[RMDB]
RNA sequence: GGGAACGACUCGAGUAGAGUCGAAAAUCGCGCACGCAAUGUCAUGCAGAUAUUAACUUCAAGCGUUGCACAAGUUGGCACGGACACGGGUGACACUCCUCUAGAGGAUGCGCGCGUUGAACCGACCACCAUGGUUACAGUUCGCUGUAACCAUGGUAAAAGAAACAACAACAACAAC
Reactivity to DMS in 0.01 (KOAc 150mM, MgCl2 10mM, bicine 150mM(pH8.5), 24C), signal-to-noise 5, nucleotides 027 to 126: u000c060g010c100g020c050a070c070g000c020a070a060u010g020u000c040a110u000g020c150a090g000a100u000a090u010u010a060a140c110u010u000c110a050a140g000c020g020u010u000g050c020a130c140a080a080g010u010u000g000g010c010a020c020g010g010a130c030a020c000g000g000g010u000g000a160c030a040c180u000c000c020u010c200u000a160g010a050g000g000a030u000g000c000g000c000g000c010g000u010u020g030a060a040c030c010g000a300c010c010
Reactivity to 2A3 in 0.01 (KOAc 150mM, MgCl2 10mM, bicine 150mM(pH8.5), 24C), signal-to-noise 5, nucleotides 027 to 126: u080c020g000c010g000c080a020c050g010c020a020a080u060g040u170c040a070u150g060c070a040g050a030u130a060u200u230a110a130c050u100u050c080a080a050g000c010g070u060u080g000c030a030c010a070a070g090u130u050g030g020c010a010c040g010g040a010c010a010c030g190g080g000u010g090a070c000a010c100u010c030c010u050c040u090a130g040a030g220g010a010u020g000c010g000c000g000c000g030u030u130g020a010a010c000c010g010a010c000c000
The record gives the reactivity of an RNA of 177 nucleotides to DMS and 2A3. The 2A3 profile rests on 6,775 reads. Values cover nucleotides 27 to 126. DMS adducts were read by reverse transcription with MarathonRT. It was measured as part of the RMDB library OK2TRN. Values are in units of 0.01, from 0 to 300, in steps of 10. For 2A3 the reverse transcriptase was SuperScript II with manganese. The RNA was probed in 150 mM KOAc, 10 mM MgCl2 and 150 mM bicine (pH 8.5) at 24 C.